[RMDB]
Overview:
Structure probing data (2A3 and DMS) for a 207-nucleotide construct. The reactions ran in a buffer of 150 mM KOAc, 10 mM MgCl2 and 150 mM bicine (pH 8.5), at 24 C. The DMS profile rests on 5,258 reads. Reactivities are given for positions 27 through 156. The 2A3 profile rests on 6,269 reads. DMS (dimethyl sulfate) methylates the pairing face of unpaired adenines and cytosines. Reactivities are rounded to 0.1 and cut off at 0 and 3.
RNA sequence: GGGAACGACUCGAGUAGAGUCGAAAACGUGUCCGUCGGCGUAGCCGACAUCAUGCCCAGGUAGCCCAGACCUUCAAGGCUACGGUGCGUUGCGACGCACGGUCUGAUUCUUCACAACGACGUUCACAAGAUCGGAUCACUUUCGAGUGAUCCGAAAGUGAUGUAUUUCAUUCGUGAAAUACAUCACAAAAGAAACAACAACAACAAC
Reactivity to 2A3 in 0.01 (KOAc 150mM, MgCl2 10mM, bicine 150mM(pH8.5), 24C), signal-to-noise 7, nucleotides 027 to 156: c030g010u030g020u060c090c100g020u000c000g010g010c190g110u140a060g030c010c010g000a010c010a010u020c010a010u050g030c000c000c000a020g030g010u010a010g000c030c040c110a020g010a010c010c000u020u010c020a010a010g000g000c000u000a000c010g010g000u000g010c000g000u000u070g060c220g080a010c000g000c010a010c020g000g010u010c000u000g010a020u060u090c060u120u140c090a060c030a240a090c110g130a030c070g110u100u080c070a060c030a160a070g040a190u040c010g000g000a000u000c000a000c000u050u100u100c100g070a010g000u000g000a000u000c000c000g000a010a010a000
Reactivity to DMS in 0.01 (KOAc 150mM, MgCl2 10mM, bicine 150mM(pH8.5), 24C), signal-to-noise 2, nucleotides 027 to 156: c060g010u000g000u000c070c080g020u000c010g010g010c020g010u000a100g030c000c000g030a070c020a020u010c020a080u000g020c020c030c050a080g030g010u000a030g000c030c020c180a130g000a130c040c050u000u000c130a070a230g010g000c010u000a060c000g020g010u000g000c040g000u000u000g050c120g000a120c020g020c020a050c000g010g010u000c010u000g000a160u000u010c060u000u010c090a150c070a100a110c060g010a060c030g000u000u000c020a070c030a050a130g000a150u000c010g000g000a020u000c000a000c000u000u010u000c230g020a050g020u000g000a000u000c010c000g000a000a010a100